The data come from the RNA Mapping Database (RMDB), library OK3TST. This 207-nucleotide RNA was probed chemically with 2A3. For 2A3, 548 sequencing reads were counted. The RNA was probed in 150 mM KOAc, 10 mM MgCl2 and 150 mM bicine (pH 8.5) at 24 C.

[RMDB]
RNA sequence: GGGAACGACUCGAGUAGAGUCGAAAAGCAUCCGACAUGGUGCUGGGAUGCGAAUAUCAGCACGUUACUCCUCGAGAAGGCAUGGGAGGAGGAUCAUCCAUGCAAUGGCUUUUGCCUAUCGUACCAUAGAGUCGUCGGUACGUAAGAUGACGACUGAAUAUCGCUGGCAGUUCGCUGCCAGCGAUAUAAAAGAAACAACAACAACAAC
Reactivity to 2A3 in 0.01 (KOAc 150mM, MgCl2 10mM, bicine 150mM(pH8.5), 24C), signal-to-noise 1, nucleotides 027 to 156: g030c000a130u070c060c000g050a110c130a120u150g000g040u010g020c040u030g010g010g000a000u080g040c070g020a000a120u200a050u100c020a000g000c000a000c010g020u020u040a030c000u030c000c000u010c030g000a010g030a040a100g030g020c020a000u030g090g000g000a050g000g060a060g070g000a020u100c040a020u080c050c020a000u010g000c040a140a170u150g070g000c060u080u110u190u300g000c000c000u010a070u030c040g000u010a010c000c000a080u030a060g090a000g050u000c000g010u030c050g060g000u150a100c180g030u060a000a060g000a140u150g010a050c030g040a020c000u030g040a070